[RMDB]
RNA sequence: GGGAACGACUCGAGUAGAGUCGAAAACAAGCGCGGCAGGUGCUCCGGAUGUUUGGAGCUGGGUCGCAAGCUGUAUGCGCACAUGCGAUGCGCGUCUCCUGUGCGGACAGACUCUGGCAACCUGGCCUCUACGCAUGGUGUUCGCGCCGUGUGUAGAAAAAGAAACAACAACAACAAC
Reactivity to 2A3 in 0.01 (KOAc 150mM, MgCl2 10mM, bicine 150mM(pH8.5), 24C), signal-to-noise 4, nucleotides 027 to 126: c030a000a020g030c010g000c010g050g000c010a010g060g000u030g030c020u010c010c000g000g030a100u100g030u040u080u220g000g000a000g000c000u000g000g000g070u000c000g000c000a000a000g000c010u010g040u160a020u070g040c000g030c000a010c010a030u230g150c070g110a120u020g020c020g000c000g030u030c000u000c000c000u030g010u010g050c000g010g000a000c000a000g010a050c000u010c010u040g010g000c000a000a050c000c000u020g100g030c000c000
Reactivity to DMS in 0.01 (KOAc 150mM, MgCl2 10mM, bicine 150mM(pH8.5), 24C), signal-to-noise 2, nucleotides 027 to 126: c090a070a070g000c040g010c040g000g000c020a040g010g010u000g000c030u010c090c090g000g010a300u090g000u020u030u120g000g000a150g000c000u060g000g000g070u000c040g000c000a020a020g000c080u010g000u050a010u010g000c010g000c000a000c000a140u010g010c170g000a090u000g010c020g000c010g020u000c010u000c070c000u000g010u000g010c000g010g000a030c010a010g000a050c010u010c020u000g020g000c100a020a060c000c000u010g010g000c040c030
The record gives the reactivity of an RNA of 177 nucleotides to 2A3 and DMS. For 2A3 the reverse transcriptase was SuperScript II with manganese. The RNA was probed in 150 mM KOAc, 10 mM MgCl2 and 150 mM bicine (pH 8.5) at 24 C. The 2A3 profile rests on 10,767 reads.